[RMDB]
RNA sequence: GGGAACGACUCGAGUAGAGUCGAAAAGAUAUGGAAGCGUUCGGUGAACUACUCGUCCAGGAUCGGAAACGAUCCUGGCGAGCACCGAGACGCUUCCUAAGUCAAAAGCUCCCCUUCGGGGGAGCAACUGUUAAUAAAUCUUCGGAUUUAUUAACAGAAAAGAAACAACAACAACAAC
Reactivity to 2A3 in 0.01 (KOAc 150mM, MgCl2 10mM, bicine 150mM(pH8.5), 24C), signal-to-noise 1, nucleotides 027 to 126: g000a040u130a050u190g000g000a000a000g020c010g010u000u020c010g030g040u020g010a070a020c050u230a060c010u300c030g300u220c050c010a010g000g000a000u000c010g010g000a140a050a050c000g000a000u000c000c010u000g000g000c000g000a000g000c020a010c000c000g020a000g000a000c010g010c000u000u020c000c000u000a000a000g020u000c000a130a000a020a200g000c020u020c030c030c000c040u020u130c300g080g000g010g000g000a000g000c010a000a010
Reactivity to DMS in 0.01 (KOAc 150mM, MgCl2 10mM, bicine 150mM(pH8.5), 24C), signal-to-noise 2, nucleotides 027 to 126: g010a080u000a300u000g000g000a040a010g000c000g010u000u010c000g010g000u010g000a070a040c030u010a300c030u000c000g000u040c000c000a000g000g000a020u000c000g000g000a150a100a220c000g020a010u000c000c000u000g000g000c010g000a020g010c000a000c000c000g010a030g010a010c010g020c000u000u010c000c000u000a020a090g000u000c050a130a160a190a250g010c020u000c000c000c000c020u010u010c190g030g030g000g000g010a010g020c020a010a010